Background
The data come from the RNA Mapping Database (RMDB), library M2PK90. Structure probing data (DMS and 2A3) for a 177-nucleotide construct. The RNA was probed in 150 mM KOAc, 10 mM MgCl2 and 150 mM bicine (pH 8.5) at 24 C. Values cover nucleotides 27 to 126.

RNA sequence: GGGAACGACUCGAGUAGAGUCGAAAAGUAGUGCUCGAGAGGGAGGCUGUCUCGCAGAGCUUUUAGAUCUUCUGAUCUUUCCCUCCUCCAUAUCGCUUAUGCGUCAAGCGAUAGUCGCAUAAUUAAAGGACGAGUACUUAUUCGUAAGUACUCGUCCAAAAGAAACAACAACAACAAC
Reactivity to DMS in 0.01 (KOAc 150mM, MgCl2 10mM, bicine 150mM(pH8.5), 24C), signal-to-noise 1, nucleotides 027 to 126: g010u010a040g010u010g010c030u000c040g000a020g000a150g000g020g000a060g010g020c080u000g010u000c010u000c040g000c090a050g030a180g010c010u000u000u000u000a020g010a010u000c000u000u020c260u030g000a010u000c000u000u000u000c000c000c000u010c000c010u010c010c060a130u010a050u000c010g030c130u000u000a060u000g000c080g010u000c030a040a070g010c110g030a050u000a050g010u000c020g000c040a020u000a050a060u010u000a040a060a080
Reactivity to 2A3 in 0.01 (KOAc 150mM, MgCl2 10mM, bicine 150mM(pH8.5), 24C), signal-to-noise 1, nucleotides 027 to 126: g020u100a000g150u050g130c030u030c100g040a030g020a020g070g070g020a070g120g070c080u030g100u120c000u010c000g000c030a030g060a010g110c000u020u010u010u000a000g000a000u030c020u300u020c140u300g020a010u000c000u000u000u010c000c010c000u000c010c010u000c020c010a050u060a010u020c020g000c040u050u000a000u060g040c030g040u020c070a040a020g070c030g070a090u050a060g060u020c050g000c070a060u050a120a100u230u180a110a030a030